[RMDB]
RNA sequence: GGGAACGACUCGAGUAGAGUCGAAAACGCUGGGACAUCCGAAGCUACGAUAAGUGUUCUCCCCACCAGAAACUGAAGCGCGCACGGUUUCUGAGGAACACUUUUGACGUAGUGUAGAUGUCCUGUGCUGAAGCGCGCACGGCAACCGAAAGGUGCGGAGUCCAUAUUUGUUCGCAAAUAUGGACUCAAAAGAAACAACAACAACAAC
Reactivity to 2A3 in 0.01 (KOAc 150mM, MgCl2 10mM, bicine 150mM(pH8.5), 24C), signal-to-noise 4, nucleotides 027 to 156: c030g010c010u020g010g010g000a010c000a010u010c090c080g150a160a030g000c000u010a010c000g190a300u060a190a010g010u010g010u010u010c020u030c050c040c000c000a010c010c000a000g000a000a000a000c010u010g020a240a040g010c000g020c000g000c000a000c010g000g010u010u000u000c000u000g010a010g000g000a000a000c000a000c000u030u010u040u160g300a210c010g010u010a000g010u030g080u300a020g000a000u000g000u000c000c000u000g010u010g000c020u090g030a100a070g000c000g000c000g000c010a000c000g050g000c020a070a070c000c000g060a120a040a030g020g000u030g010c020g060
Reactivity to DMS in 0.01 (KOAc 150mM, MgCl2 10mM, bicine 150mM(pH8.5), 24C), signal-to-noise 2, nucleotides 027 to 156: c070g040c010u000g040g010g030a040c000a050u030c020c050g010a170a300g020c010u000a000c050g020a200u010a080a050g030u000g040u000u000c020u020c300c080c000c030a300c090c040a060g000a020a030a030c020u000g020a040a080g040c050g020c000g000c040a300c020g000g000u010u010u000c020u000g010a180g000g020a020a030c030a000c000u000u000u000u000g020a120c050g000u000a020g020u010g020u000a020g010a000u000g000u010c010c020u000g030u010g000c000u000g000a090a020g020c000g000c020g100c020a300c000g070g010c000a040a080c040c030g050a050a120a100g040g020u000g040c020g000